This 177-nucleotide RNA was probed chemically with 2A3 and DMS. For DMS the reverse transcriptase was MarathonRT. It was measured as part of the RMDB library OK1LIB. Conditions: 150 mM KOAc, 10 mM MgCl2 and 150 mM bicine (pH 8.5), 24 C.
[RMDB]
RNA sequence: GGGAACGACUCGAGUAGAGUCGAAAAGAUGAGAAUACGUGACUUGGUCAGAGGCGGAAAGCCACAAGCACGAACGAUGCAGUAGAGUAUCGAGCCGCCAACAGAUGCACGUUGUGAUCGUGCUAGAGCCCUAUAGGACUUUCGAGUCCUAUAGGGCAAAAGAAACAACAACAACAAC
Reactivity to 2A3 in 0.01 (KOAc 150mM, MgCl2 10mM, bicine 150mM(pH8.5), 24C), signal-to-noise 2, nucleotides 027 to 126: g070a090u130g030a040g050a070a130u210a020c000g000u050g070a110c010u050u120g050g050u160c120a090g000a040g140g000c010g000g100a120a120a000g000c010c000a070c010a110a020g000c000a030c010g000a070a040c010g000a010u010g000c010a020g160u280a050g220a020g080u000a000u040c010g000a020g100c050c020g060c040c000a100a060c020a010g120a070u110g000c000a000c020g010u000u010g130u060g120a050u240c000g000u010g000c010u000a040g000a070
Reactivity to DMS in 0.01 (KOAc 150mM, MgCl2 10mM, bicine 150mM(pH8.5), 24C), signal-to-noise 2, nucleotides 027 to 126: g000a070u000g000a080g030a170a050u020a100c050g010u000g000a070c000u020u000g000g030u010c100a120g080a230g000g000c000g060g020a050a130a050g010c080c000a060c200a010a090g010c030a070c090g000a120a250c060g010a040u000g040c060a110g000u020a030g000a110g000u010a020u000c050g000a170g000c070c000g000c010c030a060a150c230a100g000a070u020g000c020a090c110g020u000u030g000u000g050a050u040c080g070u050g010c030u000a030g020a300